[RMDB]
RNA sequence: GGGAACGACUCGAGUAGAGUCGAAAACGACGCAUUUCUUCCAGCCAGCCACCCGUCGAAUGCCAGGUCAUCGUUUCGGCUGACCCCCAAAGGUGAGUGAUUGUGCACAGAAGUUUUUGGCUACUCACGUUCCCUUUCACUUCGGUGAAAGGGAACGAAAAGAAACAACAACAACAAC
Reactivity to DMS in 0.01 (KOAc 150mM, MgCl2 10mM, bicine 150mM(pH8.5), 24C), signal-to-noise 2, nucleotides 027 to 126: c040g000a180c130g020c160a100u010u010u000c070u000u050c020c000a160g110c090c100a050g020c030c030a080c160c060c010g000u000c030g000a080a080u000g030c020c090a140g000g000u000c100a090u000c040g020u000u000u000c040g000g000c050u040g000a220c000c000c020c030c000a030a070a090g020g000u020g000a070g020u000g000a090u000u020g000u030g000c020a000c120a190g000a080a120g060u040u010u000u000u000g000g010c010u020a010c020u000c070a300
Reactivity to 2A3 in 0.01 (KOAc 150mM, MgCl2 10mM, bicine 150mM(pH8.5), 24C), signal-to-noise 2, nucleotides 027 to 126: c030g040a030c050g040c080a050u050u030u020c010u030u000c040c000a010g010c070c030a000g000c010c010a070c000c010c010g050u100c050g060a080a030u150g090c040c040a010g000g050u030c010a010u060c090g020u010u050u010c000g030g000c020u020g080a090c000c000c010c000c000a070a030a010g060g050u070g040a050g010u040g010a040u140u080g040u000g110c010a030c020a070g050a120a010g050u050u040u020u040u040g020g000c000u000a040c000u070c000a030